[RMDB]
RNA sequence: GGGAACGACUCGAGUAGAGUCGAAAACACUCUAAACGUGCUCGUGUGAACUGCUAUGUGUAUGCAGGAAAAAGAGCAUGGAAAAAUACACAUAAUCACACUUUGAGAGGUAGAGUGAAAAAGAAAAGGGUAUAUCAAUGUUCGCAUUGAUAUACCCAAAAGAAACAACAACAACAAC
Reactivity to 2A3 in 0.01 (KOAc 150mM, MgCl2 10mM, bicine 150mM(pH8.5), 24C), signal-to-noise 5, nucleotides 027 to 126: c000a010c000u000c010u080a100a200a090c060g180u300g050c020u010c020g030u020g000u000g040a070a050c090u130g060c070u130a000u040g010u010g020u010a010u030g080c070a090g120g220a040a080a070a050a040g160a020g040c010a030u030g010g030a010a080a020a020a000u020a010c020a000c000a000u020a030a060u010c000a010c000a000c000u080u210u280g020a020g000a020g030g020u010a010g020a010g030u020g060a090a030a020a020a000g180a000a070a030a050
Reactivity to DMS in 0.01 (KOAc 150mM, MgCl2 10mM, bicine 150mM(pH8.5), 24C), signal-to-noise 2, nucleotides 027 to 126: c040a000c000u000c000u000a020a120a100c120g000u100g010c000u000c000g000u000g000u000g020a010a120c140u050g000c180u000a030u010g010u000g000u000a000u010g000c020a150g020g000a040a090a080a120a080g000a040g020c040a070u000g000g000a010a060a080a090a040u020a030c000a000c000a040u020a070a150u000c000a010c020a000c020u000u050u080g020a000g000a120g010g010u030a030g000a010g000u010g000a030a030a050a050a050g020a050a080a090a100
Conditions: 150 mM KOAc, 10 mM MgCl2 and 150 mM bicine (pH 8.5), 24 C. This 177-nucleotide RNA was probed chemically with 2A3 and DMS. For DMS the reverse transcriptase was MarathonRT. The DMS profile rests on 3,827 reads. 2A3 adducts were read by reverse transcription with SuperScript II with manganese. It was measured as part of the RMDB library OK1LIB.